This 177-nucleotide RNA was probed chemically with DMS and 2A3.
For DMS, 3,824 sequencing reads were counted.
The reactions ran in a buffer of 150 mM KOAc, 10 mM MgCl2 and 150 mM bicine (pH 8.5), at 24 C.

RNA sequence: GGGAACGACUCGAGUAGAGUCGAAAAUACGCUAAGUUCGCUUAGCGUAAAAUAUAUGGGACUAUAUAAAACCUGAUAGCCCUAGAAGAUCAUGUAUCGGCAAAAUCACCAUCUUCGGAUGGUGAAAGUGAAGGAAAUACUUCGGUAUUUCCUUCACAAAAGAAACAACAACAACAAC
Reactivity to DMS in 0.01 (KOAc 150mM, MgCl2 10mM, bicine 150mM(pH8.5), 24C), signal-to-noise 2, nucleotides 027 to 126: u000a000c000g000c000u000a010a000g010u010u030c230g010c010u000u000a000g010c000g010u000a000a030a070a070u000a060u010a090u010g000g010g010a050c030u000a020u000a070u010a070a040a070a160c070c050u000g010a050u000a010g010c010c000c000u010a100g040a110a110g010a020u000c050a110u000g030u000a020u000c010g000g010c180a040a040a070a110u010c000a010c010c000a010u000c000u010u010c150g020g000a000u000g000g010u000g000a000a010a040
Reactivity to 2A3 in 0.01 (KOAc 150mM, MgCl2 10mM, bicine 150mM(pH8.5), 24C), signal-to-noise 4, nucleotides 027 to 126: u040a000c000g010c010u010a000a000g010u030u080c130g050c110u000u010a000g000c000g000u000a000a010a010a000u110a000u010a090u070g010g000g020a060c020u010a010u010a010u040a160a130a030a030c020c010u020g040a080u040a060g010c010c000c000u020a080g060a210a010g000a050u060c040a100u230g120u200a040u050c010g090g010c100a050a050a030a190u020c000a000c000c000a000u000c000u030u070c190g110g000a000u000g000g000u000g000a010a000a000